[RMDB]
RNA sequence: GGGAACGACUCGAGUAGAGUCGAAAAGCAUCUCUGGAGGCUGCUGGGGGGCCCUUCCUCUUUCUCCCUGGUCGACGGCUUGCUGGGGAAGCCUAGGAUGUCCGACUGCCUGGACAUUUGCAUUGCCAAAUGGACCGGAUUUCGAUCCGGUCCAUUUAAAAGAAACAACAACAACAAC
Reactivity to DMS in 0.01 (KOAc 150mM, MgCl2 10mM, bicine 150mM(pH8.5), 24C), signal-to-noise 2, nucleotides 027 to 126: g020c060a080u000c010u000c020u040g000g000a030g000g010c030u000g050c030u010g010g020g000g010g000g010c040c030c000u000u020c020c020u010c040u000u000u000c050u010c000c000c010u010g030g000u010c150g000a140c100g000g010c020u000u010g010c000u000g030g000g010g010a040a040g010c030c050u050a090g010g010a030u010g000u010c010c010g000a150c120u020g000c050c020u000g010g010a050c020a010u010u000u000g000c200a120u030u020g010c060c050

This 177-nucleotide RNA was probed chemically with DMS.